Chemical mapping of a 207-nucleotide RNA with DMS and 2A3. For DMS, 2,307 sequencing reads were counted. For 2A3, 1,449 sequencing reads were counted.
RNA sequence: GGGAACGACUCGAGUAGAGUCGAAAAUAUACUUGGUUCUCAAAAACCAAGCUCAAUAAGAGCUAACAAAUGUAUAGAAUUCCAUGACAAUAGUCUACUUGGUAAGAAAUCGAAAACAAUGACUGCAUAAAUCUACCACAAAGACUUUUAUUGAGAAUAAUAUGGUACCAUUCGUGGUACCAUAUUAAAAAGAAACAACAACAACAAC
Reactivity to DMS in 0.01 (KOAc 150mM, MgCl2 10mM, bicine 150mM(pH8.5), 24C), signal-to-noise 2, nucleotides 027 to 156: u010a120u010a110c010u000u010g000g000u000u000c010u010c170a070a040a110a140a030c010c010a040a030g010c010u000c030a030a070u010a070a120g000a000g030c010u010a190a140c080a060a120a090u000g000u010a110u000a080g010a090a160u010u000c080c050a090u010g010a090c020a130a080u000a070g020u000c020u000a090c090u000u000g010g020u000a110a150g020a020a060a110u000c050g000a120a120a110a090c040a070a070u010g000a080c000u010g040c010a110u030a040a020a120u000c000u000a060c000c030a090c050a100a150a170g010a020c000u000u000u010u000a040u010u000g000a050g000a110a230
Reactivity to 2A3 in 0.01 (KOAc 150mM, MgCl2 10mM, bicine 150mM(pH8.5), 24C), signal-to-noise 3, nucleotides 027 to 156: u080a010u000a010c010u030u030g000g050u040u010c200u040c150a100a110a040a000a010c000c000a000a000g000c000u000c010a040a110u200a150a010g030a000g060c040u080a050a070c050a090a130a040u050g030u030a040u030a070g070a080a130u110u020c040c030a020u080g060a040c040a020a100u080a080g020u000c000u010a050c070u120u070g030g000u100a160a070g060a140a150a050u180c090g040a060a180a020a040c040a120a060u170g020a090c030u100g010c000a010u070a130a100a010u000c010u060a040c010c040a010c040a060a190a050g070a290c000u040u090u060u070a060u080u040g000a000g070a080a010